[RMDB]
RNA sequence: GGGAACGACUCGAGUAGAGUCGAAAAAGAGUGGUGCUCUGUUAGGACCAGGUCCCUGCUUGCUUAAGGGUCCCCUGUUUUCACUCCCUCUACCCCCCUGAGCAUAGUUCGAAAAUUGCUGCCCAGCCAUCAGAGAGUUUGGGGCAGAGGAGUAACAACUACGAGCAUGAUUCGUCAUGCUCGUAGUAAAAGAAACAACAACAACAAC
Reactivity to DMS in 0.01 (KOAc 150mM, MgCl2 10mM, bicine 150mM(pH8.5), 24C), signal-to-noise 1, nucleotides 027 to 156: a100g000a090g000u000g010g030u010g070c020u000c020u000g010u020u010a110g040g000a050c050c080a180g010g020u000c030c030c000u010g020c110u010u010g000c050u000u020a090a110g000g000g000u000c020c040c000c080u050g000u000u010u000u000c050a080c050u000c050c000c040u000c020u000a140c000c020c010c000c060c030u000g010a050g060c040a120u000a120g070u000u010c030g010a080a120a030a090u000u000g020c030u010g060c000c000c020a070g020c010c030a190u010c070a140g000a180g000a090g020u000u000u000g090g050g040g120c010a030g010a040g020g030a100g010u000a060a150c040a100
An RNA of 207 nucleotides, treated with DMS and read out base by base. The reactions ran in a buffer of 150 mM KOAc, 10 mM MgCl2 and 150 mM bicine (pH 8.5), at 24 C. Reactivities are given for positions 27 through 156.